[RMDB]
RNA sequence: GGGAACGACUCGAGUAGAGUCGAAAAUUUCGGGAAGUAGUAGUUCUUGUUCAGACCCACCGGGUUAUCGGAGAUCAUGCGCAGCGCGCCAUACACCAUGUUGGACUUGCCGAUGACCAGCGUACGUUUCUGCGCAUCAACGUCGUACUGAACCGCGCUAUUAAUCGAUUUUCGAAUCGAUUAAUAGAAAAGAAACAACAACAACAAC
Reactivity to DMS in 0.01 (KOAc 150mM, MgCl2 10mM, bicine 150mM(pH8.5), 24C), signal-to-noise 3, nucleotides 027 to 156: u000u000u000c040g000g010g030a100a070g020u010a070g040u000a090g020u000u000c030u000u000g010u010u000c030a060g000a110c090c010c020a120c060c040g020g020g020u000u000a020u000c020g010g010a130g000a070u000c050a080u000g020c080g020c050a040g020c160g020c040g010c030c040a120u010a100c050a110c070c050a090u010g000u000u010g030g030a100c090u000u010g040c030c010g010a040u000g010a050c030c030a110g020c060g000u000a060c060g000u000u000u000c010u000g010c040g030c010a060u000c040a010a040c000g000u000c050g020u000a180c010u000g010a060a140c030c030g000c100g000
Reactivity to 2A3 in 0.01 (KOAc 150mM, MgCl2 10mM, bicine 150mM(pH8.5), 24C), signal-to-noise 6, nucleotides 027 to 156: u070u080u060c040g010g010g020a070a060g040u140a030g010u030a030g010u090u060c030u070u100g020u070u050c030a030g030a150c030c010c020a020c020c040g060g000g000u030u020a030u050c010g020g000a050g020a080u120c040a050u130g010c050g000c030a110g050c060g030c020g010c140c020a080u140a110c030a030c070c060a070u200g070u020u060g070g020a070c030u050u120g050c020c010g010a010u010g010a020c010c000a010g010c020g030u050a030c040g010u050u000u000c010u020g000c000g000c010a030u060c010a010a030c010g050u070c010g020u080a070c050u060g020a050a020c010c020g050c020g010
About this RNA:
Conditions: 150 mM KOAc, 10 mM MgCl2 and 150 mM bicine (pH 8.5), 24 C. The record gives the reactivity of an RNA of 207 nucleotides to DMS and 2A3. The DMS profile rests on 7,340 reads. Values cover nucleotides 27 to 156. The 2A3 profile rests on 6,739 reads.